An RNA of 177 nucleotides, treated with 2A3 and DMS and read out base by base. For 2A3, 637 sequencing reads were counted. For DMS the reverse transcriptase was MarathonRT. As a SHAPE reagent, 2A3 marks flexible, mostly unpaired nucleotides at the ribose 2'-OH. The RNA was probed in 150 mM KOAc, 10 mM MgCl2 and 150 mM bicine (pH 8.5) at 24 C. Values cover nucleotides 27 to 126. For 2A3 the reverse transcriptase was SuperScript II with manganese. Values are in units of 0.01, from 0 to 300, in steps of 10.
[RMDB]
RNA sequence: GGGAACGACUCGAGUAGAGUCGAAAAGGCUCAGAAUGAACGUUGGCGGCGUGGAUUAGGCAUGCAAGUCGAGCGAGAAUCUGUUGAAUGAUCCUUCGGGUGAAUGAUUCAGAGGACAGCGGCAAACACCCAACAAGUCAUUCGUGACUUGUUGGGUAAAAGAAACAACAACAACAAC
Reactivity to 2A3 in 0.01 (KOAc 150mM, MgCl2 10mM, bicine 150mM(pH8.5), 24C), signal-to-noise 1, nucleotides 027 to 126: g000g000c010u020c050a020g070a060a100u140g060a100a060c080g000u000u040g060g000c050g020g000c100g030u070g000g000a040u020u160a000g000g140c030a020u030g000c090a050a040g010u000c020g090a000g050c000g020a010g010a150a000u000c010u010g040u000u000g090a000a000u040g000a010u060c020c000u000u000c010g060g000g060u050g000a070a010u020g000a030u020u000c030a000g000a000g020g000a000c000a000g020c020g040g000c000a010a010a010c040
Reactivity to DMS in 0.01 (KOAc 150mM, MgCl2 10mM, bicine 150mM(pH8.5), 24C), signal-to-noise 2, nucleotides 027 to 126: g030g000c000u000c040a100g020a080a050u010g000a040a050c120g020u010u010g000g020c040g010g020c060g020u030g010g000a090u000u000a080g000g000c040a070u010g030c050a090a150g000u010c010g000a040g020c030g000a040g000a300a160u030c020u000g000u010u000g010a260a070u000g020a070u000c000c060u000u050c150g010g000g010u000g000a110a060u010g010a180u010u000c020a040g000a010g000g000a190c140a060g010c000g000g000c020a060a110a100c170